[RMDB]
RNA sequence: GGGAACGACUCGAGUAGAGUCGAAAAUGUUAUUACAAGCAUUAUUGAUUUAAUCAAGACUUGCAUUCAGGCUUUCGGUUAAUUUUUUCAACUAAAAAACAGAGGAAAUAUUCAACGACUUGAUUGUCAGAAUUUCAAAAUUCGUUUUGAAAUUCUGAAAAGAAACAACAACAACAAC
Reactivity to 2A3 in 0.01 (KOAc 150mM, MgCl2 10mM, bicine 150mM(pH8.5), 24C), signal-to-noise 4, nucleotides 027 to 126: u040g010u020u060a180u120u200a110c070a080a000g040c030a010u020u030a070u090u170g080a080u090u130u300a110a090u070c040a050a010g060a150c030u040u060g000c030a040u060u060c050a030g080g000c040u010u040u110c020g020g030u020u060a060a050u040u020u000u030u000u080c070a100a090c070u180a070a050a060a050a060a080c080a030g030a030g050g040a020a020a020u050a030u030u060c050a060a010c020g050a010c000u020u040g040a050u030u040g050u000